Chemical mapping of a 177-nucleotide RNA with DMS. The reactions ran in a buffer of 150 mM KOAc, 10 mM MgCl2 and 150 mM bicine (pH 8.5), at 24 C. It was measured as part of the RMDB library OK2TRN. The DMS profile rests on 668 reads. Values cover nucleotides 27 to 126.

[RMDB]
RNA sequence: GGGAACGACUCGAGUAGAGUCGAAAAUGUCUAGGCUGCAUUCAGAAAGUAGAACUAGCAAUGAGCAUCUAUAUUAUCGCCUGCUCAUACCAGACGCUGUUGACAAGUAUUUUGACAUUGAGCCAGAAGAGAUGGUAGACUUCGGUCUACCAUCUCUAAAAGAAACAACAACAACAAC
Reactivity to DMS in 0.01 (KOAc 150mM, MgCl2 10mM, bicine 150mM(pH8.5), 24C), signal-to-noise 1, nucleotides 027 to 126: u010g040u000c000u020a050g000g040c050u010g000c020a200u010u000c090a110g010a160a180a120g000u040a030g040a060a070c060u000a060g010c030a100a080u000g000a060g010c070a090u000c090u000a100u010a060u000u010a050u000c130g010c080c100u000g000c020u000c110a000u000a060c140c030a070g000a070c140g010c030u000g050u020u030g000a080c140a100a060g000u000a060u000u000u000u000g000a030c040a100u000u000g000a190g010c010c020a080g000a110